Structure probing data (2A3 and DMS) for a 177-nucleotide construct. Conditions: 150 mM KOAc, 10 mM MgCl2 and 150 mM bicine (pH 8.5), 24 C. For 2A3 the reverse transcriptase was SuperScript II with manganese.
RNA sequence: GGGAACGACUCGAGUAGAGUCGAAAAGAUAUGGACGACCCGGUGACAUGCUCAACAUCGGAAACGAUGUACCAGAGCAACAGCACCCGGGUCGUCCUAAGUCAAACUGCCCUGUUCGCAGGGCAGAGAGAACAUACUGGUUCGCCAGUAUGUUCUCAAAAGAAACAACAACAACAAC
Reactivity to 2A3 in 0.01 (KOAc 150mM, MgCl2 10mM, bicine 150mM(pH8.5), 24C), signal-to-noise 2, nucleotides 027 to 126: g000a010u050a010u070g000g010a000c010g000a000c010c030c040g020g030u140g030a090c130a250u270g000c000u000c000a020a000c000a010u020c000g020g000a020a030a010c010g010a000u010g020u070a120c070c160a090g010a000g090c020a060a020c070a020g200c050a030c010c060c000g000g000g010u000c010g000u000c000c000u000a000a000g000u000c010a010a020a040c000u000g000c000c000c000u020g020u020u150c300g000c120a000g000g010g000c010a000g000a000
Reactivity to DMS in 0.01 (KOAc 150mM, MgCl2 10mM, bicine 150mM(pH8.5), 24C), signal-to-noise 4, nucleotides 027 to 126: g000a050u000a190u010g010g010a040c000g010a020c000c000c010g000g010u000g010a140c150a230u000g010c000u010c000a200a020c000a000u000c000g020g010a060a030a110c000g020a010u000g000u000a080c300c270a200g000a030g010c010a060a090c250a140g010c150a040c090c010c010g000g000g000u000c000g000u000c000c000u000a010a060g010u010c030a100a120a220c000u010g000c000c000c000u000g000u010u010c170g020c000a020g000g000g010c000a000g000a050